[RMDB]
RNA sequence: GGGAACGACUCGAGUAGAGUCGAAAAGGGUUUUGGUUCGCCAAAACCCAAAAUAAAUAGUACGAAAGGCAACGUACGCCAAAAAGAUCGAAAGAUCAAAAAAAACUCAUUCCUUCGGGAAUGAGAACACAUAUAAUUGGUUCGCCAAUUAUAUGUGAAAAGAAACAACAACAACAAC
Reactivity to 2A3 in 0.01 (KOAc 150mM, MgCl2 10mM, bicine 150mM(pH8.5), 24C), signal-to-noise 3, nucleotides 027 to 126: g020g000g000u030u010u000u000g010g020u020u060c160g070c010c000a000a000a000a000c000c010c000a010a000a000a000u010a000a020a010u090a020g000u000a000c010g120a300a060a030g220g010c050a080a010c030g010u020a000c010g000c010c010a090a100a050a040a040g000a010u020c010g020a040a030a020g000a010u000c000a040a020a000a000a010a010a020a020c000u000c000a000u000u010c010c000u040u080c260g080g000g010a000a000u010g000a000g000a010a000
Reactivity to DMS in 0.01 (KOAc 150mM, MgCl2 10mM, bicine 150mM(pH8.5), 24C), signal-to-noise 3, nucleotides 027 to 126: g010g020g010u000u000u000u000g000g010u000u010c260g030c000c000a010a000a000a010c020c010c000a010a010a030a050u010a130a070a050u010a080g000u000a010c010g000a080a120a120g010g010c220a060a070c010g020u000a010c020g000c110c080a030a070a050a100a090g000a010u000c000g010a120a050a140g010a000u010c010a000a000a000a080a020a040a100a090c010u000c000a010u000u000c010c000u000u000c230g010g000g000a010a000u000g000a000g010a040a120
The record gives the reactivity of an RNA of 177 nucleotides to 2A3 and DMS. The reactions ran in a buffer of 150 mM KOAc, 10 mM MgCl2 and 150 mM bicine (pH 8.5), at 24 C. For 2A3 the reverse transcriptase was SuperScript II with manganese.